The record gives the reactivity of an RNA of 177 nucleotides to DMS and 2A3.
RNA sequence: GGGAACGACUCGAGUAGAGUCGAAAAAGUCACAGCCAGGGUUGUCUGGACAGUCACAGCUGGGGACGCCUGGGCAGUCACAGCUAGACCUGGGGAAGUCUGAGGUUGGGAGCUUCCCUGUGUCAGGACCACUGAAUUAGUUCGCUAAUUCAGUGGUAAAAGAAACAACAACAACAAC
Reactivity to DMS in 0.01 (KOAc 150mM, MgCl2 10mM, bicine 150mM(pH8.5), 24C), signal-to-noise 5, nucleotides 027 to 126: a080g010u000c030a030c040a050g010c010c010a090g010g000g010u000u010g020u000c010u000g010g010a060c030a030g010u010c090a170c180a070g010c020u000g000g000g000g000a030c030g000c020c060u000g010g010g010c020a040g010u000c040a080c030a040g010c020u010a100g010a090c170c030u000g000g010g010g010a040a030g010u010c030u000g010a110g000g000u000u010g000g000g000a140g010c030u000u000c000c000c010u010g000u000g010u000c020a150g010g010
Reactivity to 2A3 in 0.01 (KOAc 150mM, MgCl2 10mM, bicine 150mM(pH8.5), 24C), signal-to-noise 3, nucleotides 027 to 126: a010g060u040c020a030c020a050g000c010c000a020g060g040g010u220u180g050u150c010u050g030g050a030c010a010g010u060c040a040c040a190g030c010u030g030g000g150g060a000c000g020c020c030u110g020g090g000c020a030g000u030c010a020c000a040g020c010u050a040g010a020c020c050u040g000g000g000g000a000a010g030u030c050u100g100a110g200g080u180u120g100g020g030a040g010c010u040u000c000c000c020u000g020u020g010u010c040a040g050g120
2A3 adducts were read by reverse transcription with SuperScript II with manganese. Source: RMDB library OK2TRN, as collected in RNAgym.